This 207-nucleotide RNA was probed chemically with 2A3 and DMS.
The reactions ran in a buffer of 150 mM KOAc, 10 mM MgCl2 and 150 mM bicine (pH 8.5), at 24 C.
The DMS profile rests on 11,051 reads.
Reactivities are given for positions 27 through 156.
Values are in units of 0.01, from 0 to 300, in steps of 10.
RNA sequence: GGGAACGACUCGAGUAGAGUCGAAAAUGAGUGCUGAUGAAAUCCAUUUGGAUCCAUUAGAUCCUGAGAGCACUGAAUGUCAGGAGCUGUGGUUGAAGGACCAGAGCAGGGCUUGGCCUUCGCAGUUUAGCUCUUUAAAAUGCCAUCCUGAUUCAGAAUUAAUAUGGUGAUUCGUCACCAUAUUAAUAAAAGAAACAACAACAACAAC
Reactivity to 2A3 in 0.01 (KOAc 150mM, MgCl2 10mM, bicine 150mM(pH8.5), 24C), signal-to-noise 5, nucleotides 027 to 156: u190g010a030g040u020g000c020u030g000a050u060g040a050a080a090u080c040c030a090u130u060u230g000g000a010u010c020c010a080u150u110a070g010a050u030c020c020u050g040a060g000a020g030c020a010c050u020g060a120a060u160g010u070c020a000g000g020a030g000c000u020g030u050g150g100u080u130g070a060a030g060g030a090c010c020a030g020a010g120c050a050g010g140g000c020u050u060g000g000c000c010u050u030c050g000c020a020g000u030u060u100a010g000c000u000c000u040u060u050a080a110a040a040u140g040c020c020a030u040c000c000u040g020a060u070u080c050a030g080a130
Reactivity to DMS in 0.01 (KOAc 150mM, MgCl2 10mM, bicine 150mM(pH8.5), 24C), signal-to-noise 4, nucleotides 027 to 156: u000g010a070g040u000g060c020u000g010a090u010g010a090a080a120u000c010c020a300u000u000u000g030g010a040u000c010c040a130u000u000a080g000a030u000c010c010u010g000a110g000a080g020c020a100c030u000g000a070a190u000g010u000c010a040g000g010a110g010c060u000g010u010g000g020u010u000g000a150a080g010g010a070c020c010a100g010a110g000c010a090g000g010g020c060u000u000g000g000c010c020u000u000c140g020c060a060g000u000u000u010a080g010c020u000c030u000u010u000a030a050a070a130u000g020c040c050a140u020c020c000u000g010a080u000u000c040a110g010a140